[RMDB]
RNA sequence: GGGAACGACUCGAGUAGAGUCGAAAAAGGAAGACAAGAGAUCACCUCGGGCAACUUUCGUUUACACAGAGAGGUGUGUAAAGUGGAACCAAGGCUUGCAACUCUAGGCAUCCCUUGUGUUUGUCAGGAUUUCAGCUUAUUUGGGGUGGCUGCAAGGCUUUUGUCAGGUAUUCGUACCUGACAAAAGAAAAGAAACAACAACAACAAC
Reactivity to 2A3 in 0.01 (KOAc 150mM, MgCl2 10mM, bicine 150mM(pH8.5), 24C), signal-to-noise 4, nucleotides 027 to 156: a010g070g010a040a030g040a030c060a050a050g020a010g010a100u050c040a030c030c020u040c040g000g020g000c030a070a020c040u070u160u140c040g050u020u030u030a030c040a000c030a020g080a000g040a030g200g100u030g000u000g010u040a020a040a050g110u130g080g000a010a000c010c000a020a010g010g010c030u030u020g000c030a060a170c050u060c090u220a080g100g000c000a010u010c000c020c000u030u040g080u030g020u070u070u060g080u050c050a020g030g050a040u050u050u040c030a020g010c020u080u090a080u130u300u130g020g000g010g020u030g010g010c010u030g020c040a020a020g100g000
Reactivity to DMS in 0.01 (KOAc 150mM, MgCl2 10mM, bicine 150mM(pH8.5), 24C), signal-to-noise 2, nucleotides 027 to 156: a050g040g000a060a050g020a120c020a070a130g020a100g000a130u010c030a060c050c020u010c030g000g010g000c010a040a070c050u000u000u000c060g010u010u000u000a040c040a030c030a040g040a110g030a110g000g010u000g030u000g010u010a010a040a090g040u000g030g000a110a100c020c020a040a100g030g030c020u010u020g020c030a070a070c070u000c090u000a130g020g000c020a070u010c050c000c020u010u000g050u010g010u020u010u000g000u000c060a130g010g000a100u010u000u000c020a080g010c030u000u000a090u000u010u010g040g000g000g060u000g040g020c080u000g000c070a040a090g010g000